[RMDB]
RNA sequence: GGGAACGACUCGAGUAGAGUCGAAAACGUGAGGUCUUAUCCUUGGAAAACUAAAACAAGGAGUUUUAGCAAGAAUGGAAGCGUACAAGACAGCAAUCACGUAAGAAGUGGUAGCUUGAACGUGAAGCGUAUGGGUGGGUUUCGACCCACCCAUACGAAAAGAAACAACAACAACAAC
Reactivity to 2A3 in 0.01 (KOAc 150mM, MgCl2 10mM, bicine 150mM(pH8.5), 24C), signal-to-noise 2, nucleotides 027 to 126: c010g070u080g120a090g010g100u030c050u000u120a130u000c010c010u010u020g080g060a030a070a040a060c080u100a060a060a030a000c000a030a120g090g000a100g200u030u030u020u030a040g000c030a140a000g020a090a060u150g140g010a000a090g000c030g030u030a030c070a000a030g060a040c020a020g070c020a000a010u010c020a000c020g010u000a100a000g120a050a000g000u080g030g020u070a000g050c000u000u050g060a060a000c030g020u000g030a100a000g070
Reactivity to DMS in 0.01 (KOAc 150mM, MgCl2 10mM, bicine 150mM(pH8.5), 24C), signal-to-noise 2, nucleotides 027 to 126: c070g040u020g000a070g000g020u000c000u060u000a140u000c000c040u010u000g000g040a030a100a020a180c110u000a070a040a020a000c020a170a220g000g020a120g000u000u030u020u020a070g000c180a100a080g060a180a050u000g000g000a080a100g000c020g010u010a060c040a060a030g020a130c150a090g010c100a150a060u000c000a030c000g010u000a150a130g000a090a100g030u000g000g000u000a020g010c000u060u010g000a080a010c020g000u000g010a060a130g010